Structure probing data (DMS) for a 177-nucleotide construct. DMS adducts were read by reverse transcription with MarathonRT. The reactions ran in a buffer of 150 mM KOAc, 10 mM MgCl2 and 150 mM bicine (pH 8.5), at 24 C. For DMS, 819 sequencing reads were counted. It was measured as part of the RMDB library OK2TST.
[RMDB]
RNA sequence: GGGAACGACUCGAGUAGAGUCGAAAAGGCCACCAGCGCCCCGGCGAAGGCCAUCGCCAGUUGUUCCUGUGCGGAAGAGUAACCAAACAGCGCCGCACCCAGCACAAUGGCAAAGCUGGCUCCGGCAGCUAUGGAGCCGAUUCGUCGGCUCCAUAGCAAAAGAAACAACAACAACAAC
Reactivity to DMS in 0.01 (KOAc 150mM, MgCl2 10mM, bicine 150mM(pH8.5), 24C), signal-to-noise 2, nucleotides 027 to 126: g000g020c040c010a080c130c050a090g000c050g000c000c020c060c070g040g020c040g010a130a050g000g000c040c040a030u020c020g030c000c010a100g020u010u010g000u000u010c030c010u010g030u000g010c070g000g000a020a050g010a300g020u030a100a150c080c170a080a160a050c030a100g010c300g010c000c010g000c050a040c100c090c050a040g050c030a040c110a060a100u000g010g020c030a110a060a100g010c040u000g000g000c140u010c130c030g000g020c140a080